[RMDB]
RNA sequence: GGGAACGACUCGAGUAGAGUCGAAAAGGCUGGGAGUGCUGUUCGACUGCCACUUUGCGUCGGUGCCAGGGCAGCAGAUGCUGGCGAUAUACGCGACGCGCGGCGCGCCGUGCGCCCUGGGUGCGUGGCGCUCGGCGGACCUGGCCGACGCGGUGCGAGUAUCAAUCACCUUCGGGUGAUUGAUACUAAAAGAAACAACAACAACAAC
Reactivity to 2A3 in 0.01 (KOAc 150mM, MgCl2 10mM, bicine 150mM(pH8.5), 24C), signal-to-noise 2, nucleotides 027 to 156: g170g000c010u050g050g050g000a060g030u060g050c060u040g010u030u060c080g040a100c050u110g080c070c010a000c000u020u070u180g010c000g000u020c030g020g060u110g090c000c020a060g010g000g060c000a010g050c070a000g080a300u300g040c000u030g040g010c000g020a030u050a030u080a230c040g010c020g070a040c030g060c000g020c020g030g040c040g000c000g030c020c000g020u000g000c010g000c000c010c050u140g090g000g000u010g010c030g010u030g000g000c000g000c000u010c000g030g000c000g000g000a010c000c000u010g000g000c020c010g000a010c010g000c000g010g000u010g000c010g010